[RMDB]
RNA sequence: GGGAACGACUCGAGUAGAGUCGAAAACGGAUCCGGAGUCGAUUAUUCGCACCAAGAUCGCAGAAUAUGCGAUGGCUUGGGGCGAACGGAUUCAUAACGAUGAGCAGAUCCGCACCGAAUUGGAUCGGGAAUACAACACUUUCGAGUGUUGUAUUCCAAAAGAAACAACAACAACAAC
Reactivity to 2A3 in 0.01 (KOAc 150mM, MgCl2 10mM, bicine 150mM(pH8.5), 24C), signal-to-noise 3, nucleotides 027 to 126: c020g010g020a000u000c010c000g010g010a030g070u050c020g000a030u020u100a030u160u000c010g000c010a020c000c000a000a000g010a020u000c000g000c000a010g100a130a100u300a070u180g010c000g000a010u020g220g080c000u000u010g010g000g000g000c010g000a010a000c020g070g040a060u100u110c050a020u100a060a070c050g030a030u080g030a010g040c030a010g010a030u000c010c000g000c010a040c020c030g050a110a160u110u130g060g030a040u070c060g050
Reactivity to DMS in 0.01 (KOAc 150mM, MgCl2 10mM, bicine 150mM(pH8.5), 24C), signal-to-noise 6, nucleotides 027 to 126: c040g010g000a010u000c000c010g010g030a300g010u000c030g000a110u010u000a250u000u000c000g010c000a020c000c010a000a010g000a110u000c000g020c000a020g000a170a090u020a080u000g000c000g000a020u000g010g000c020u000u000g020g000g010g010c020g020a010a040c120g000g010a070u000u010c160a100u000a100a110c040g000a020u000g000a300g000c250a090g000a010u000c000c020g000c090a300c030c030g010a050a100u010u000g010g000a210u000c080g000
Notes:
Structure probing data (2A3 and DMS) for a 177-nucleotide construct. 2A3 adducts were read by reverse transcription with SuperScript II with manganese. DMS (dimethyl sulfate) methylates the pairing face of unpaired adenines and cytosines. The DMS profile rests on 5,594 reads. The RNA was probed in 150 mM KOAc, 10 mM MgCl2 and 150 mM bicine (pH 8.5) at 24 C. The 2A3 profile rests on 5,877 reads.